[RMDB]
Chemical mapping of a 177-nucleotide RNA with DMS and 2A3. The data come from the RNA Mapping Database (RMDB), library RFM100. The RNA was probed in 150 mM KOAc, 10 mM MgCl2 and 150 mM bicine (pH 8.5) at 24 C. 2A3 is a SHAPE reagent: it acylates the 2'-hydroxyl of flexible nucleotides of all four kinds. The 2A3 profile rests on 474 reads.

RNA sequence: GGGAACGACUCGAGUAGAGUCGAAAAUAGGAACACUUUCUGGUUCAGACAGAGGCUUAUAUCAAAAAACUCGAAUCAGAUUUGAGGGUGAAAAAAGCUUUACUCUUUUUUGCCAUCCAAAUCUUCAAUUUACGGUCACAUUCGUGUGACCGUAAAUAAAAGAAACAACAACAACAAC
Reactivity to DMS in 0.01 (KOAc 150mM, MgCl2 10mM, bicine 150mM(pH8.5), 24C), signal-to-noise 1, nucleotides 027 to 126: u000a090g000g000a080a110c080a030c080u000u000u030c000u000g000g010u000u000c030a090g000a210c160a120g020a060g000g020c100u000u010a050u030a170u000c050a030a000a120a130a220a200c050u010c070g000a050a000u000c080a170g010a080u000u070u060g000a070g020g010g000u000g000a000a000a020a030a000a020g010c300u010u030u050a080c120u010c020u000u010u010u010u000u010g030c040c000a110u010c110c040a000a050a150u000c010u000u010c020a110
Reactivity to 2A3 in 0.01 (KOAc 150mM, MgCl2 10mM, bicine 150mM(pH8.5), 24C), signal-to-noise 1, nucleotides 027 to 126: u150a010g000g050a010a050c000a010c180u000u050u000c000u010g000g010u070u060c040a060g070a110c090a060g030a060g110g030c050u090u070a140u070a030u300c160a130a040a040a040a000a050c000u000c010g020a030a030u070c010a060g060a030u030u080u040g050a090g000g000g050u000g060a010a010a010a000a020a000g010c000u060u060u110a120c000u010c000u110u000u000u000u000u000g030c010c010a010u000c000c000a000a020a030u080c040u160u080c080a060